[RMDB]
RNA sequence: GGGAACGACUCGAGUAGAGUCGAAAAGUGCAGAGUGAAAUUCAUAGGUGCCACGCCAAUGUGGCGCAAUGACCCGGUACUCCGCGCAGUCGCGCUGUAAACGUUCUGUGUUGGCGUUCAGGCCUCACGCUCAUAUAGCAUUCGUGCUAUAUGAGCGAAAAGAAACAACAACAACAAC
Reactivity to 2A3 in 0.01 (KOAc 150mM, MgCl2 10mM, bicine 150mM(pH8.5), 24C), signal-to-noise 2, nucleotides 027 to 126: g100u120g010c010a000g060a040g020u150g110a000a070a100u080u010c030a030u100a160g150g000u010g000c000c000a010c010g100c090c220a100a120u300g000u000g000g000c000g000c010a000a030u030g000a000c000c000c000g000g000u000a030c000u000c000c010g000c010g040c010a000g080u160c030g000c010g040c050u020g030u090a110a020a010c000g000u050u030c040u020g050u000g000u100u190g000g000c010g000u050u060c080a050g060g000c000c020u060c000a030
Reactivity to DMS in 0.01 (KOAc 150mM, MgCl2 10mM, bicine 150mM(pH8.5), 24C), signal-to-noise 3, nucleotides 027 to 126: g000u010g020c020a080g020a060g030u000g000a060a040a060u020u000c030a010u030a100g000g030u000g020c010c000a010c010g000c240c260a090a090u060g030u010g020g000c000g020c020a040a000u020g010a040c090c020c020g020g010u010a060c010u020c010c080g040c020g000c040a060g000u020c080g000c040g000c020u010g000u020a040a050a110c030g000u020u010c050u020g030u020g000u000u010g000g010c160g010u000u020c110a090g000g000c020c000u000c040a240

Structure probing data (2A3 and DMS) for a 177-nucleotide construct. Conditions: 150 mM KOAc, 10 mM MgCl2 and 150 mM bicine (pH 8.5), 24 C. DMS adducts were read by reverse transcription with MarathonRT. For 2A3 the reverse transcriptase was SuperScript II with manganese. Source: RMDB library OK1LIB, as collected in RNAgym. The 2A3 profile rests on 1,310 reads. In probing experiments dimethyl sulfate is read out at A N1 and C N3, which are open when not base-paired.